[RMDB]
RNA sequence: GGGAACGACUCGAGUAGAGUCGAAAACGUGUUUCCAUUAUAAAAUGUUUUAACCUCCAUAAAUAUCGCCUCACCUUUUUGAUGUAUUAUACCCUGUUAUCAUAACAAAUCUGAGUUGAAUACAUGACGAUGAGAAAACAUUCGUGUUUUCUCAUCGAAAAGAAACAACAACAACAAC
Reactivity to 2A3 in 0.01 (KOAc 150mM, MgCl2 10mM, bicine 150mM(pH8.5), 24C), signal-to-noise 2, nucleotides 027 to 126: c000g070u070g000u080u010u020c010c000a070u160u150a070u110a140a220a050a120u080g060u020u080u050u010a100a090c000c040u010c000c000a010u110a150a110a000u110a040u040c040g000c010c000u020c010a080c020c000u000u100u010u070u140g070a020u040g040u090a060u110u070a050u070a040c010c010c000u020g010u040u050a070u060c070a050u070a150a060c040a020a030a050u020c060u040g040a040g060u080u030g030a050a030u050a050c050a060u030g000a010
Reactivity to DMS in 0.01 (KOAc 150mM, MgCl2 10mM, bicine 150mM(pH8.5), 24C), signal-to-noise 2, nucleotides 027 to 126: c160g000u010g010u000u000u000c020c040a090u010u010a180u020a110a070a100a060u010g000u000u010u010u000a040a170c040c020u000c020c030a030u010a010a060a100u010a060u000c050g010c070c030u000c040a060c030c020u000u000u000u010u010g000a040u000g000u000a030u010u000a080u000a140c000c030c030u000g020u000u000a040u010c130a010u000a040a030c110a040a080a050u000c090u000g000a080g030u000u000g000a050a040u010a070c100a020u010g010a180
Conditions: 150 mM KOAc, 10 mM MgCl2 and 150 mM bicine (pH 8.5), 24 C. This 177-nucleotide RNA was probed chemically with 2A3 and DMS. Reactivities are given for positions 27 through 126. The 2A3 profile rests on 1,131 reads. For DMS the reverse transcriptase was MarathonRT.